[RMDB]
RNA sequence: GGGAACGACUCGAGUAGAGUCGAAAAGACGUAAUCCGCGCAAAUCCACAAACGCCAACGAUGAGCGUUUCGCUGUAGCCGCUUCAGGCAACAGCCGGGGCCGCCUGAGCCCUGUUACCAAAGACGGGAAACUCGAUGCCAUUCGUGGCAUCGAGAAUCUUCAUACUAUCUUCGGAUAGUAUGAAGAAAAAGAAACAACAACAACAAC
Reactivity to 2A3 in 0.01 (KOAc 150mM, MgCl2 10mM, bicine 150mM(pH8.5), 24C), signal-to-noise 6, nucleotides 027 to 156: g050a000c020g030u050a080a070u070c060c040g000c000g020c060a050a090a120u070c060c030a100c080a100a070a000c040g000c020c040a120a080c130g170a210u160g040a060g040c010g000u000u050u080c060g000c000u000g010u030a040g000c000c000g080c130u250u190c110a060g000g000c010a020a010c000a010g000c000c000g000g000g000g000c010c030g010c020c020u010g010a020g000c000c000c000u000g060u070u090a030c010c020a010a020a000g140a040c030g000g010g010a030a050a040c000u000c000g000a000u000g000c000c000a020u060u080c170g070u100g000g000c000a000u000c000g000a000g000a000a010
Reactivity to DMS in 0.01 (KOAc 150mM, MgCl2 10mM, bicine 150mM(pH8.5), 24C), signal-to-noise 2, nucleotides 027 to 156: g040a080c010g020u000a090a100u000c060c050g000c020g050c060a040a090a050u000c020c020a080c050a010a300a070c000g020c010c030a050a130c070g020a130u010g000a180g030c000g020u000u000u010c050g000c030u000g030u000a080g040c020c030g000c210u000u000c210a130g020g020c010a050a020c010a040g050c010c040g000g020g000g040c010c050g030c080c090u000g010a190g000c000c020c000u030g010u000u000a120c080c100a050a100a120g000a090c070g080g000g000a060a090a130c010u000c000g000a010u000g010c020c010a110u000u000c240g010u000g030g040c010a000u000c000g050a000g000a000a040